[RMDB]
RNA sequence: GGGAACGACUCGAGUAGAGUCGAAAAGAUAUGGAGCAUGAACUACAGCUUGCAUGGACUGAUGACCCAUUGCUUCGGAAACGAAGCAAUGGCAAGGUUCUGUGAUGAGCUGCAUGCUCCUAAGUCAUCAUUACAGGUAGUUCGCUACCUGUAAUGAAAAAGAAACAACAACAACAAC
Reactivity to 2A3 in 0.01 (KOAc 150mM, MgCl2 10mM, bicine 150mM(pH8.5), 24C), signal-to-noise 6, nucleotides 027 to 126: g000a010u010a010u060g010g010a000g010c020a000u010g020a110a070c110u300a110c300a020g020c010u050u090g010c030a060u190g020g010a000c010u020g140a300u040g010a250c000c000c000a010u000u000g010c000u000u010c000g000g000a010a010a000c010g000a000a000g000c030a000a000u010g000g030c010a260a300g010g000u040u020c020u030g040u040g150a300u210g030a030g000c000u000g020c010a000u000g010c010u020c000c000u000a000a000g010u000c020a060
Reactivity to DMS in 0.01 (KOAc 150mM, MgCl2 10mM, bicine 150mM(pH8.5), 24C), signal-to-noise 6, nucleotides 027 to 126: g000a010u000a020u010g000g000a020g020c010a010u010g010a080a030c100u040a300c020a000g000c000u000u000g010c020a010u010g010g000a000c000u000g010a050u010g000a020c300c010c000a010u000u000g010c000u000u010c000g000g000a010a010a030c000g010a020a000g020c000a000a000u000g000g000c010a020a010g010g010u000u000c000u000g010u000g010a110u000g000a010g010c010u000g000c000a000u000g010c000u000c000c000u000a000a030g000u000c010a200
Notes: Structure probing data (2A3 and DMS) for a 177-nucleotide construct. Values cover nucleotides 27 to 126. For 2A3, 15,144 sequencing reads were counted.